[RMDB]
About this RNA: This 177-nucleotide RNA was probed chemically with 2A3 and DMS. The reactions ran in a buffer of 150 mM KOAc, 10 mM MgCl2 and 150 mM bicine (pH 8.5), at 24 C. The 2A3 profile rests on 1,386 reads. DMS adducts were read by reverse transcription with MarathonRT. It was measured as part of the RMDB library OK1LIB.
RNA sequence: GGGAACGACUCGAGUAGAGUCGAAAACGCUGCUCUUCUGCCGCUGUCGACGGCGGCGCAGUCGCAGUAUUUAGGUAAGAUCAGACACUCUGUAGAGGUUAAGCGGGCAGAACCGUUUCUGCUACUCGCCAUCGAUUUACUUCGGUAAAUCGAUGGCAAAAGAAACAACAACAACAAC
Reactivity to 2A3 in 0.01 (KOAc 150mM, MgCl2 10mM, bicine 150mM(pH8.5), 24C), signal-to-noise 3, nucleotides 027 to 126: c080g000c020u010g000c000u010c000u040u000c060u200g010c000c000g020c020u110g130u300c070g200a220c070g050g000c000g000g040c010g000c000a000g020u070c080g000c000a000g000u050a170u040u070u110a090g010g000u050a130a040g010a140u140c050a020g060a040c010a030c090u000c010u050g140u110a050g000a030g060g000u030u140a040a000g000c010g040g010g000c050a020g040a100a030c020c080g010u020u010u000c000u010g060c000u010a060c020u010c030
Reactivity to DMS in 0.01 (KOAc 150mM, MgCl2 10mM, bicine 150mM(pH8.5), 24C), signal-to-noise 1, nucleotides 027 to 126: c180g000c080u030g000c050u000c100u000u000c050u000g000c090c100g000c000u000g000u040c270g010a080c220g000g080c060g000g000c000g030c110a040g000u010c280g000c020a020g070u000a000u000u110u000a020g000g020u050a050a000g000a090u000c000a000g020a180c230a100c000u000c010u000g100u000a010g000a090g050g000u000u000a000a150g000c050g000g000g080c050a020g000a090a060c120c050g000u000u000u040c120u000g000c010u000a160c130u000c170